This 177-nucleotide RNA was probed chemically with DMS. Source: RMDB library TTRINS, as collected in RNAgym. Reactivities are given for positions 27 through 126. Conditions: 150 mM KOAc, 10 mM MgCl2 and 150 mM bicine (pH 8.5), 24 C.
RNA sequence: GGGAACGACUCGAGUAGAGUCGAAAAGAUAUGGAACGCAGUCCCACUCGCUUGAUGACCCAUGUAACAAGUAUUCGGAAACGAAUACCGCCCAUGGCAAGAGCGGUGGGACUGCGUUCCUAAGUCAGAAUCUAAAGCUCUUCGGAGCUUUAGAUUCAAAAGAAACAACAACAACAAC
Reactivity to DMS in 0.01 (KOAc 150mM, MgCl2 10mM, bicine 150mM(pH8.5), 24C), signal-to-noise 1, nucleotides 027 to 126: g000a050u010a300u000g000g010a020a000c000g050c010a030g020u010c000c000c000a010c000u000c030g040c000u000u010g060a040u000g000a200c300c000c000a000u000g010u000a060a120c170a270a090g000u000a010u000u000c000g000g000a160a120a220c000g020a000a000u000a010c010c010g030c300c300c030a010u000g000g000c080a030a030g010a030g070c000g010g000u000g000g000g010a000c000u010g000c030g010u010u000c000c010u010a020a030g000u030c050a160